An RNA of 177 nucleotides, treated with DMS and 2A3 and read out base by base. DMS adducts were read by reverse transcription with MarathonRT. 2A3 adducts were read by reverse transcription with SuperScript II with manganese. High 2A3 reactivity points to a flexible backbone, as in loops and unpaired stretches. It was measured as part of the RMDB library OK2TRN.
RNA sequence: GGGAACGACUCGAGUAGAGUCGAAAAAAGUGGCCUACUUCAAGGCUUUGAAUCAACUUAAGGGAAAACCUUUUGUCUUUGUAAAAAUAAAAGCCUGUAGCUAAGGUUUACAGUGGACAUUAGCCAGCCAAGGCUAACUAUUCGUAGUUAGCCUUGGAAAAGAAACAACAACAACAAC
Reactivity to DMS in 0.01 (KOAc 150mM, MgCl2 10mM, bicine 150mM(pH8.5), 24C), signal-to-noise 3, nucleotides 027 to 126: a100a110g020u000g000g000c000c000u000a060c050u000u000c040a100a040g000g010c000u000u000u000g010a180a110u010c120a150a060c020u000u000a020a010g020g010g010a130a070a140a180c010c000u000u000u000u000g000u000c070u000u010u010g010u020a030a040a070a070a090u000a140a020a020a010g000c000c010u000g000u000a040g000c160u000a070a030g000g000u000u000u020a050c010a080g010u010g010g000a110c090a130u000u010a080g010c030c060a130g010
Reactivity to 2A3 in 0.01 (KOAc 150mM, MgCl2 10mM, bicine 150mM(pH8.5), 24C), signal-to-noise 1, nucleotides 027 to 126: a000a000g070u040g010g040c010c000u010a020c000u030u010c030a150a040g000g000c000u040u000u010g020a020a010u090c030a010a020c010u040u060a000a000g100g020g030a070a140a100a270c000c040u000u000u000u000g020u040c090u050u080u100g040u070a090a140a020a050a070u180a130a060a010a000g000c000c050u000g050u050a010g000c040u050a050a000g000g020u040u010u040a030c030a020g060u050g080g040a010c030a180u060u120a120g050c020c020a010g000